[RMDB]
RNA sequence: GGGAACGACUCGAGUAGAGUCGAAAAGAGGUUAAGUGGCUUGUCUAAGAGCUCACAAAAAGAGCGAUGGAGCUAAGGCUUGGCCCCAGAUAUUAGAUCCCGAACCCACGCCUUAACCAGUGACCUGCGCUCAAAGAGUUUUCGAACUCUUUGAGCGAAAAGAAACAACAACAACAAC
Reactivity to DMS in 0.01 (KOAc 150mM, MgCl2 10mM, bicine 150mM(pH8.5), 24C), signal-to-noise 1, nucleotides 027 to 126: g000a100g010g010u000u000a030a050g050u000g020g000c060u010u010g000u050c040u010a070a090g000a300g000c010u000c010a050c100a060a120a120a120a120g020a030g010c000g020a260u000g000g000a030g010c050u000a040a090g000g010c080u000u010g000g010c000c000c020c030a160g000a130u010a070u000u000a050g020a130u000c090c070c000g000a090a100c070c000c030a030c100g010c050c030u010u000a040a050c030c020a090g000u020g010a120c030c010u000g040
Reactivity to 2A3 in 0.01 (KOAc 150mM, MgCl2 10mM, bicine 150mM(pH8.5), 24C), signal-to-noise 1, nucleotides 027 to 126: g080a010g020g090u140u110a170a100g040u110g070g060c050u000u050g000u190c070u070a110a030g000a020g120c020u180c050a050c070a010a260a080a000a000g000a000g030c090g030a070u060g040g020a040g110c010u060a040a030g040g010c010u000u000g010g000c010c000c000c000a040g070a080u160a050u160u290a110g040a030u040c040c070c050g010a000a000c050c000c010a040c070g010c000c030u000u070a030a060c010c010a010g040u030g050a070c000c000u080g000